This 177-nucleotide RNA was probed chemically with 2A3 and DMS. Source: RMDB library OK2TST, as collected in RNAgym. For 2A3, 1,185 sequencing reads were counted.

RNA sequence: GGGAACGACUCGAGUAGAGUCGAAAAAUUGAUAUGAAUCAGCCAGAUAUGAAGCUCGAUGAAUCUGCAAAAGCUCAUAUAAAAAUGAAACCUAAGCCUGGUUUUACAGAUAAAAUUCCUGACGGCACAUCCUGAUAUACUUCGGUAUAUCAGGAUGAAAAGAAACAACAACAACAAC
Reactivity to 2A3 in 0.01 (KOAc 150mM, MgCl2 10mM, bicine 150mM(pH8.5), 24C), signal-to-noise 2, nucleotides 027 to 126: a000u100u070g050a030u090a040u200g060a000a030u000c010a040g100c130c010a020g020a130u110a030u140g110a190a050g010c080u070c080g110a040u140g030a010a170u060c060u150g020c070a030a070a110a000g040c010u090c040a000u050a010u040a060a170a030a030a000u140g020a060a010a010c000c010u030a090a000g010c010c000u000g010g040u020u050u010u080a040c030a030g050a030u100a110a070a000a080u060u000c000c010u040g040a060c040g020g000c030a000
Reactivity to DMS in 0.01 (KOAc 150mM, MgCl2 10mM, bicine 150mM(pH8.5), 24C), signal-to-noise 2, nucleotides 027 to 126: a070u020u000g010a120u010a150u000g000a140a060u010c040a100g050c110c030a110g000a060u040a040u000g000a100a110g020c020u010c090g030a110u010g010a140a040u000c040u000g000c040a020a060a150a060g020c050u000c000a020u000a080u000a030a080a020a140a120u010g000a070a050a060c080c020u000a050a140g010c090c020u000g010g020u000u000u000u000a050c110a050g030a090u010a010a030a050a100u000u000c030c010u000g000a050c150g020g010c150a170
Source information:
2A3 adducts were read by reverse transcription with SuperScript II with manganese. Values cover nucleotides 27 to 126.